[RMDB]
RNA sequence: GGGAACGACUCGAGUAGAGUCGAAAACGGGAGCGUCCUAGGCCUGGACACCAACACCGCGCCUGCGCAGGCCGGUGCAGCCGCCUCAGGGGCAGCGCCAAACACUCCUUUGACGGUGAACGGCCUCGUAAAAGUGCAUGUUCGCAUGCACUUUUACAAAAGAAACAACAACAACAAC
Reactivity to 2A3 in 0.01 (KOAc 150mM, MgCl2 10mM, bicine 150mM(pH8.5), 24C), signal-to-noise 1, nucleotides 027 to 126: c030g010g050g030a090g120c140g040u050c010c030u070a050g020g030c000c050u050g040g020a010c020a020c060c020a030a000c010a010c030c000g050c030g000c040c010u170g030c210g030c200a030g000g030c000c010g000g000u030g000c050a030g020c000c000g000c020c000u030c030a030g030g010g020g030c100a030g060c050g030c060c000a020a150a020c000a020c020u010c020c010u050u000u070g000a040c070g000g040u030g020a060a000c020g000g000c000c030u040c050
Reactivity to DMS in 0.01 (KOAc 150mM, MgCl2 10mM, bicine 150mM(pH8.5), 24C), signal-to-noise 3, nucleotides 027 to 126: c050g010g000g010a100g010c080g000u000c000c000u000a050g000g010c030c020u000g020g010a120c070a050c080c080a100a180c040a010c000c000g010c180g000c010c000u000g000c290g030c180a040g020g010c020c030g020g050u000g020c090a120g010c010c020g000c020c030u000c100a030g000g000g020g030c070a080g010c040g010c140c130a120a060a110c130a120c060u000c030c020u010u000u000g000a010c030g010g020u000g000a070a120c160g010g000c010c010u000c210